[RMDB]
RNA sequence: GGGAACGACUCGAGUAGAGUCGAAAAGAACUCUCCGACUCUCACGAAGCGGAAACGCGACCUAGCAUCCAUGAUAAAUAAAUGUGAGAGGAAGGAGAGGAAAAGUGGAUGCUAGGGAAAAUAAAAAGGGAUAAGUUUAGUUCGCUAAACUUAUCCCAAAAGAAACAACAACAACAAC
Reactivity to DMS in 0.01 (KOAc 150mM, MgCl2 10mM, bicine 150mM(pH8.5), 24C), signal-to-noise 2, nucleotides 027 to 126: g000a080a160c030u000c010u000c000c040g030a300c010u000c000u000c000a000c000g000a160a090g000c000g010g020a080a070a190c000g000c000g000a120c020c020u000a010g010c000a000u000c000c000a010u000g010a050u030a020a050a080u020a100a060a030u100g020u000g000a020g000a000g000g020a150a210g000g000a020g000a040g000g010a010a090a040a070g000u000g070g000a000u000g000c000u000a000g000g000g020a030a010a060a070u050a030a100a160a110a060
Reactivity to 2A3 in 0.01 (KOAc 150mM, MgCl2 10mM, bicine 150mM(pH8.5), 24C), signal-to-noise 4, nucleotides 027 to 126: g070a060a040c010u020c000u010c000c010g080a050c000u000c000u010c000a010c050g080a120a020g010c000g000g050a070a040a020c020g020c000g040a100c000c000u020a010g010c000a010u000c000c000a020u060g040a060u140a140a080a010u220a020a070a090u190g000u000g000a000g000a000g020g030a050a100g000g010a010g000a000g000g000a010a060a010a000g010u000g000g000a000u000g000c010u000a000g020g000g010a030a070a010a000u300a020a080a000a020a010

An RNA of 177 nucleotides, treated with DMS and 2A3 and read out base by base. DMS adducts were read by reverse transcription with MarathonRT. High 2A3 reactivity points to a flexible backbone, as in loops and unpaired stretches. Source: RMDB library OK1LIB, as collected in RNAgym. The reactions ran in a buffer of 150 mM KOAc, 10 mM MgCl2 and 150 mM bicine (pH 8.5), at 24 C.